[RMDB]
RNA sequence: GGGAACGACUCGAGUAGAGUCGAAAAGUCCGAAAGUUCGCUUUCGGACAAAUAAGCGGCCACCUCCAGGCCGCCAAACAAUAUGGAGCACAAAUAAGAAUAAAACCCGGUACUUCGGUACCGGGAACAUUGUGUCAGAGUUCGCUCUGACACAAUGAAAAGAAACAACAACAACAAC
Reactivity to DMS in 0.01 (KOAc 150mM, MgCl2 10mM, bicine 150mM(pH8.5), 24C), signal-to-noise 3, nucleotides 027 to 126: g010u000c000c000g000a010a010a000g010u000u020c300g010c000u000u000u000c010g010g010a000c000a020a060a050u010a110a130g010c020g030g020c000c000a090c180c000u000c020c000a040g000g020c000c000g030c000c100a000a050a030c110a020a020u000a050u000g010g000a010g040c300a080c220a030a080a100u010a070a100g010a140a100u000a060a100a110a110c010c000c000g000g000u000a000c000u000u020c210g040g030u000a000c000c000g000g030g000a000a030
Reactivity to 2A3 in 0.01 (KOAc 150mM, MgCl2 10mM, bicine 150mM(pH8.5), 24C), signal-to-noise 2, nucleotides 027 to 126: g020u000c000c000g020a000a010a000g010u060u160c220g010c140u000u000u000c000g010g000a000c000a000a000a000u020a030a000g000c010g000g000c010c040a120c010c040u000c000c000a000g000g000c000c000g000c000c000a020a100a010c030a000a020u040a020u040g000g010a010g040c090a010c020a050a140a030u220a140a110g150a080a010u110a090a130a040a040c000c000c010g020g000u000a000c000u020u080c190g070g000u010a010c010c020g000g000g000a000a000